[RMDB]
RNA sequence: GGGAACGACUCGAGUAGAGUCGAAAAAGAUCGAUUACGAUCGAUCAAUGAUGCCCCUCACCCACCUCUGAAGAUCCCAGGUGGGCGAGGGAACGGAGCACGAGAUCACGAGCAGUACGCUGCUCGAAAAAGAACUAGACCUUCGGGUCUAGUUCAAGUCAAAUGGAACGUUCGCGUUCCAUUUGACAAAAGAAACAACAACAACAAC
Reactivity to 2A3 in 0.01 (KOAc 150mM, MgCl2 10mM, bicine 150mM(pH8.5), 24C), signal-to-noise 2, nucleotides 027 to 156: a000g000a000u010c000g010a000u060u120a160c220g060a000u000c000g000a000u000c040a000a100u210g030a070u120g050c050c000c000c020u010c020a010c000c000c000a000c000c000u030c160u180g080a100a030g040a170u070c040c000c030a000g000g010u020g000g000g000c000g000a010g030g000g000a000a050c070g090g050a080g000c060a050c060g080a060g010a110u180c070a000c090g010a010g000c010a000g020u020a020c150g050c070u000g000c000u000c000g000a040a000a000a000a010g010a000a000c000u000a000g000a000c000c000u000u090c220g110g000g000u000c000u020a000g000u000u000c020a000a000
This 207-nucleotide RNA was probed chemically with 2A3. Values cover nucleotides 27 to 156. Conditions: 150 mM KOAc, 10 mM MgCl2 and 150 mM bicine (pH 8.5), 24 C.